This 177-nucleotide RNA was probed chemically with 2A3.
The reactions ran in a buffer of 150 mM KOAc, 10 mM MgCl2 and 150 mM bicine (pH 8.5), at 24 C.
High 2A3 reactivity points to a flexible backbone, as in loops and unpaired stretches.
For 2A3 the reverse transcriptase was SuperScript II with manganese.
RNA sequence: GGGAACGACUCGAGUAGAGUCGAAAAUGCUACUUGUGUGAGAAUACUUUUAGUACAAGCGAGUACACGCAGUAUACUGCUACUUGUGUGAGAAUACUUUUAGUACAAGCGAGUACACGCAGUAUAGGGACCGCACUAGUUUCGACUAGUGCGGUCCAAAAGAAACAACAACAACAAC
Reactivity to 2A3 in 0.01 (KOAc 150mM, MgCl2 10mM, bicine 150mM(pH8.5), 24C), signal-to-noise 1, nucleotides 027 to 126: u130g050c000u000a000c040u080u230g000u000g000u000g000a070g070a040a150u080a010c000u070u000u000u110a000g000u000a000c070a210a000g060c030g090a060g000u000a000c050a000c090g000c000a000g000u000a000u040a300c130u110g090c000u000a000c000u050u090g000u000g000u050g120a000g150a110a000u050a000c000u000u060u000u110a000g000u000a000c070a120a090g130c050g070a000g000u060a030c110a000c120g000c000a000g130u110a070u130a070g070